Overview
Chemical mapping of a 177-nucleotide RNA with DMS. For DMS the reverse transcriptase was MarathonRT. Conditions: 150 mM KOAc, 10 mM MgCl2 and 150 mM bicine (pH 8.5), 24 C.
RNA sequence: GGGAACGACUCGAGUAGAGUCGAAAAGAUAUGGAUCGUGCAGUCCAGCUUGGAUUUACGCUCGGAAACGAGCGUUGUCAGCUGCUGCACGCGAUCCUAAGUCAAAACCUCGUGUUCGCACGAGGAAUCAUGAAAAGGCCUUCGGGCCUUUUCAUGAAAAAGAAACAACAACAACAAC
Reactivity to DMS in 0.01 (KOAc 150mM, MgCl2 10mM, bicine 150mM(pH8.5), 24C), signal-to-noise 1, nucleotides 027 to 126: g000a070u010a300u000g020g000a020u000c000g020u000g000c000a000g010u000c300c080a000g050c020u020u030g100g010a000u000u020u000a000c000g080c000u000c000g000g000a110a090a300c020g020a020g000c000g040u000u000g010u000c010a060g020c020u000g010c000u000g000c000a050c050g020c100g010a050u000c000c000u000a060a300g000u000c020a150a070a150a210c000c000u000c000g010u000g000u000u050c300g040c020a010c020g040a020g000g020a040a050